[RMDB]
RNA sequence: GGGAACGACUCGAGUAGAGUCGAAAAAAAAGAUAUGGAAGGAUUGAAAAAAUUCGCUUGGAUUUAUAUAGUGCUCGGAAACGAGGCUAUAUUGUCAGCGACCGCAGCUAUCCUUCCUAAGUCAAAACACCUUUAUAACGUUCGCGUUAUAAAGGUGAAAAGAAACAACAACAACAAC
Reactivity to 2A3 in 0.01 (KOAc 150mM, MgCl2 10mM, bicine 150mM(pH8.5), 24C), signal-to-noise 2, nucleotides 027 to 126: a000a000a000a000g010a010u020a010u050g010g000a000a010g000g020a000u020u130g080a300a170a040a030a010a020u040u010c000g000c060u080u120g200g010a110u300u300u040a060u050a000u010a050g010u210g300c000u000c010g010g010a070a020a010c000g020a000g040g040c030u010a000u020a010u020u030g050u050c000a010g030c000g020a010c000c170g100c030a000g000c000u000a010u050c000c000u000u020c000c000u000a050a010g000u000c040a030a000a090a090
Reactivity to DMS in 0.01 (KOAc 150mM, MgCl2 10mM, bicine 150mM(pH8.5), 24C), signal-to-noise 2, nucleotides 027 to 126: a060a020a040a130g030a040u030a180u000g000g020a020a000g000g010a020u020u000g000a000a020a020a060a180a190u000u000c010g010c020u010u020g020g010a060u010u010u000a000u000a000u010a000g010u010g030c000u020c000g020g000a060a040a080c010g000a020g010g000c000u010a010u010a000u000u010g010u000c010a020g030c010g000a000c170c070g010c300a100g000c020u000a030u010c000c000u000u000c010c000u010a030a080g000u000c030a100a060a100a170

Record summary
Structure probing data (2A3 and DMS) for a 177-nucleotide construct. The RNA was probed in 150 mM KOAc, 10 mM MgCl2 and 150 mM bicine (pH 8.5) at 24 C. 2A3 adducts were read by reverse transcription with SuperScript II with manganese.